[RMDB]
RNA sequence: GGGAACGACUCGAGUAGAGUCGAAAAACAAUCAACCAGCGACUAUUCACGGGAUGGGUGACAUGCGUCGGAACUUUAUUCACGUCAGUGACGUGUGUCGUGCAGUUGAUGUGAUUUUGAACAAGGGGGGAGUUGGUGAGACGUACAACAUCGGUACAAAUAGCUUCUUAUUCGUAAGAAGCUAUUUAAAAGAAACAACAACAACAAC
Reactivity to 2A3 in 0.01 (KOAc 150mM, MgCl2 10mM, bicine 150mM(pH8.5), 24C), signal-to-noise 6, nucleotides 027 to 156: a010c040a010a050u060c020a020a010c010c030a020g020c000g060a030c040u110a070u160u070c060a040c110g080g020g030a030u050g050g080g000u080g010a000c010a030u050g010c010g000u030c020g020g040a040a020c000u080u170u190a160u180u190c060a050c110g020u020c040a080g030u030g190a000c000g020u020g030u010g000u030c010g000u050g010c030a000g000u030u030g020a050u010g020u020g070a090u010u050u060u230g090a110a050c050a140a170g020g010g000g000g000g010a050g000u020u020g000g000u040g010a030g010a010c040g020u040a010c030a050a010c010a100u120c040g000g010u040a000c010
Reactivity to DMS in 0.01 (KOAc 150mM, MgCl2 10mM, bicine 150mM(pH8.5), 24C), signal-to-noise 5, nucleotides 027 to 156: a070c020a070a070u000c030a060a070c010c010a220g030c020g010a100c050u000a110u010u000c040a110c080g020g010g020a150u000g010g010g010u000g010a050c030a030u000g010c010g010u000c060g020g000a060a070c060u000u000u000a130u040u000c070a060c110g010u010c040a130g010u000g000a010c040g030u000g030u000g020u000c010g000u000g040c060a110g020u000u000g010a090u000g010u010g010a150u000u000u010u010g010a060a100c100a090a130g020g050g020g050g060g040a100g030u000u010g020g010u000g010a100g000a070c040g010u000a050c050a040a090c080a080u000c040g000g000u010a100c100